[RMDB]
RNA sequence: GGGAACGACUCGAGUAGAGUCGAAAAGAUAUGGAUUCACGGGAGAUCGAGGUUCGGAAACGAACCGAGAUCGAGGAUCGUGACUGUCCUAAGUCAAAACCAAGCCAUACUUCGGUAUGGCUUGGAACACUUCUGGUCUCUUCGGAGACCAGAAGUGAAAAGAAACAACAACAACAAC
Reactivity to DMS in 0.01 (KOAc 150mM, MgCl2 10mM, bicine 150mM(pH8.5), 24C), signal-to-noise 1, nucleotides 027 to 126: g000a010u010a160u010g000g010a000u010u000c000a000c000g050g000g050a080g010a040u000c000g010a300g000g050u000u000c000g030g000a100a060a060c000g020a000a010c000c000g010a270g000a000u000c000g040a120g000g010a060u000c000g010u000g000a010c300u010g010u000c010c000u010a060a220g000u000c020a090a050a060a210c000c000a010a010g000c000c040a010u010a010c000u000u010c150g030g000u000a030u000g010g010c000u000u000g000g000a010a070
Source information:
Conditions: 150 mM KOAc, 10 mM MgCl2 and 150 mM bicine (pH 8.5), 24 C. The record gives the reactivity of an RNA of 177 nucleotides to DMS. For DMS the reverse transcriptase was MarathonRT. Reactivities are given for positions 27 through 126.